[RMDB]
RNA sequence: GGGAACGACUCGAGUAGAGUCGAAAAACGCUUCACAAUGUGCGGCAAAGAAACAUUGUUUAUGCAAAGGCACUUCGCAUUGUGUGCUCAAACAUUGCUUAUUCAAACACGCUUCACAAUGUGCGACAAAACUUCACGGUCUUCGGACCGUGAAGAAGUAGAGUUGCUGGUUCGCCAGCAACUCUACAAAAGAAACAACAACAACAAC
Reactivity to 2A3 in 0.01 (KOAc 150mM, MgCl2 10mM, bicine 150mM(pH8.5), 24C), signal-to-noise 2, nucleotides 027 to 156: a000c000g000c010u020u030c000a000c000a040a010u000g000u000g000c000g100g050c090a080a090a140g070a030a050a010c000a010u000u050g070u000u170u120a130u080g020c050a010a070a090g050g010c000a000c030u070u070c060g000c050a040u020u070g010u000g010u020g040c000u090c110a130a160a070c070a130u050u030g000c040u040u140a070u170u200c050a030a100a110c080a060c190g080c080u180u110c080a000c020a100a020u020g000u010g000c030g100a050c080a020a050a030a040c020u000u000c000a020c000g000g000u000c040u040u060c100g140g000a020c000c000g000u000g000a000a000g000a000a000